Source: RMDB library OK3TST, as collected in RNAgym.
This 207-nucleotide RNA was probed chemically with 2A3 and DMS.
2A3 adducts were read by reverse transcription with SuperScript II with manganese.
DMS adducts were read by reverse transcription with MarathonRT.
Reactivities are rounded to 0.1 and cut off at 0 and 3.
RNA sequence: GGGAACGACUCGAGUAGAGUCGAAAAACAACAUGGCAAAACCCUGUCUCUACAACAACAACAAAAAAAAAUUAGCAGGGCAUGGUAGCAUGUGACAGUAGUCCCAGCUACUUGGGAGACUGAGGUGGAAGGAUCACUUGAGCCAAGGAGGUGGAGACAUACUGACUGGAUUCGUCCAGUCAGUAUGAAAAGAAACAACAACAACAAC
Reactivity to 2A3 in 0.01 (KOAc 150mM, MgCl2 10mM, bicine 150mM(pH8.5), 24C), signal-to-noise 2, nucleotides 027 to 156: a010c070a050a000c020a060u070g160g010c060a080a060a080a120c020c030c030u020g090u010c030u050c020u220a110c030a110a010c020a020a000c040a010a050c140a120a090a030a010a010a000a000a010a130u110u100a040g020c020a020g000g040g020c030a020u070g040g010u010a020g010c100a120u050g010u020g060a040c030a030g090u190a010g040u050c000c000c000a000g020c000u030a030c020u050u080g030g010g000a050g010a030c020u040g040a020g070g030u050g040g020a080a020g030g000a000u060c000a020c080u020u050g030a020g000c000c010a020a000g060g000a010g020g000u040g050g000a040g020a000
Reactivity to DMS in 0.01 (KOAc 150mM, MgCl2 10mM, bicine 150mM(pH8.5), 24C), signal-to-noise 2, nucleotides 027 to 156: a090c030a080a070c090a020u020g010g020c030a110a070a090a150c000c010c030u000g000u010c000u010c050u000a070c080a130a150c090a110a090c030a070a140c130a010a000a030a000a000a090a230a190a170u000u000a070g030c000a050g020g020g030c080a050u000g000g010u000a110g010c010a070u050g010u010g010a100c080a090g000u010a090g000u010c000c020c020a170g030c050u010a020c020u000u030g030g010g010a170g060a080c010u000g020a060g070g010u010g040g050a070a030g020g000a090u000c020a060c040u000u010g020a130g030c000c010a040a020g030g000a030g010g000u000g010g000a210g030a110